[RMDB]
RNA sequence: GGGAACGACUCGAGUAGAGUCGAAAACACGGCCUUCGGGCCGUGAAAAAUCCUAAGUCGAUCGAGGCAUAUGGGAGAUGGUAUCGGAAACGAUAUUCAUCGACGAUCAUAUGCUCCCCACCGAUCGAUAUGGAAAAAAUCCACGUUCGCGUGGAAACAAUAACCCCCUGUUCGCAGGGGGUUAUUGAAAAGAAACAACAACAACAAC
Reactivity to DMS in 0.01 (KOAc 150mM, MgCl2 10mM, bicine 150mM(pH8.5), 24C), signal-to-noise 1, nucleotides 027 to 156: c020a030c000g000g010c000c030u000u000c300g060g060g070c000c020g090u020g000a000a080a200a080a100u000c000c000u000a120a300g000u000c000g000a020u020c000g000a300g010g010c000a020u000a030u000g060g030g000a000g000a010u010g000g010u000a000u000c010g010g030a220a120a300c010g000a030u000a020u020u000c000a010u000c000g000a090c170g020a100u000c010a030u000a000u000g000c010u000c170c090c100c000a300c230c000g040a000u000c010g010a030u000a140u000g000g000a010a000a050a090a130a190u000c010c000a000c000g000u010u000c260g000c040g090u000g020g000a000a090a140
Reactivity to 2A3 in 0.01 (KOAc 150mM, MgCl2 10mM, bicine 150mM(pH8.5), 24C), signal-to-noise 2, nucleotides 027 to 156: c000a000c000g010g000c000c010u060u110c180g070g000g000c000c000g000u000g000a000a000a000a000a000u050c040c000u050a140a030g010u000c000g000a000u000c000g010a010g000g000c000a000u000a000u000g000g000g000a030g000a000u010g000g000u000a010u000c000g060g000a090a070a090c000g000a010u000a040u280u300c000a000u000c000g040a070c010g000a010u000c000a000u000a000u000g000c010u060c020c000c010c030a050c000c010g000a000u000c000g000a020u000a080u110g000g060a110a060a010a000a020a050u000c000c010a000c010g020u030u040c270g020c000g160u030g030g020a060a030a010
An RNA of 207 nucleotides, treated with DMS and 2A3 and read out base by base. Values cover nucleotides 27 to 156. The DMS profile rests on 1,997 reads. The reactions ran in a buffer of 150 mM KOAc, 10 mM MgCl2 and 150 mM bicine (pH 8.5), at 24 C.